[RMDB]
RNA sequence: GGGAACGACUCGAGUAGAGUCGAAAAACUUGCAAUUUCUAUGGUACAAACGCUUCCCACAUGACUGAGUUCAAGCUAUCAAGGAGACGUCACUGCACAUGGACUUGGGAAGAGAUGAGAACAAUCAGCCCACUGAGCCUAUGGGAACUGGCUCCAAGACUAUCGUCCCAUUCGUGGGACGAUAGUCAAAAGAAACAACAACAACAAC
Reactivity to 2A3 in 0.01 (KOAc 150mM, MgCl2 10mM, bicine 150mM(pH8.5), 24C), signal-to-noise 2, nucleotides 027 to 156: a020c040u080u140g040c070a210a200u040u110u100c040u070a170u140g020g010u130a110c080a030a100a010c010g000c080u000u010c000c050c020a000c050a080u180g030a140c050u040g050a030g110u130u000c050a160a000g040c050u090a030u190c020a190a020g050g010a040g050a050c010g100u010c080a010c050u060g070c040a010c020a070u070g000g080a000c010u050u060g010g000g000a000a080g000a000g010a050u150g070a070g070a010a020c020a060a020u100c020a010g000c000c000c000a050c070u040g000a000g080c010c000u040a240u120g020g010g050a070a000c090u080g000g000c010u010c030c030a150a000